[RMDB]
RNA sequence: GGGAACGACUCGAGUAGAGUCGAAAACUCCCCGUUCCUGGAGAAGGGAGACUCGGGAACGCCUAGCAUCUGAGGGACAAAGCCGCCCCCGGGCGCUCCCCUCGGAGGUCCACUGGGUGGGUUCACAGUAUCGGUUGGUUCGCCAACCGAAAAAGAAACAACAACAACAAC
Reactivity to DMS in 0.01 (KOAc 150mM, MgCl2 10mM, bicine 150mM(pH8.5), 24C), signal-to-noise 2, nucleotides 027 to 129: c270u010c030c010c000c000g020u010u050c060c010u000g000g000a070g030a090a100g030g010g010a020g010a100c100u030c120g000g010g000a000a000c110g020c020c050u030a090g010c110a000u030c050u060g020a080g000g050g000a050c120a190a140a100g030c040c050g030c010c020c030c140c230g010g010g060c080g030c070u030c080c000c010c040u030c040g010g030a040g000g080u030c070c060a130c050u080g000g040g060u050g030g030g040u000u000c070a120c040a130g070u050a040
Reactivity to 2A3 in 0.01 (KOAc 150mM, MgCl2 10mM, bicine 150mM(pH8.5), 24C), signal-to-noise 4, nucleotides 027 to 129: c030u050c000c000c010c000g020u010u000c000c020u060g080g050a050g020a090a100g040g040g000a040g010a000c030u010c060g010g010g000a040a020c030g040c000c010u040a060g030c000a130u000c020u050g020a030g000g020g000a000c040a060a080a010g040c060c000g020c010c020c000c030c060g030g000g000c030g010c010u040c000c000c000c000u010c000g000g000a010g000g010u060c020c010a090c060u060g010g010g000u060g000g030g010u050u040c050a050c000a100g070u070a070
Record summary
This 170-nucleotide RNA was probed chemically with DMS and 2A3. For 2A3, 9,023 sequencing reads were counted. As a SHAPE reagent, 2A3 marks flexible, mostly unpaired nucleotides at the ribose 2'-OH.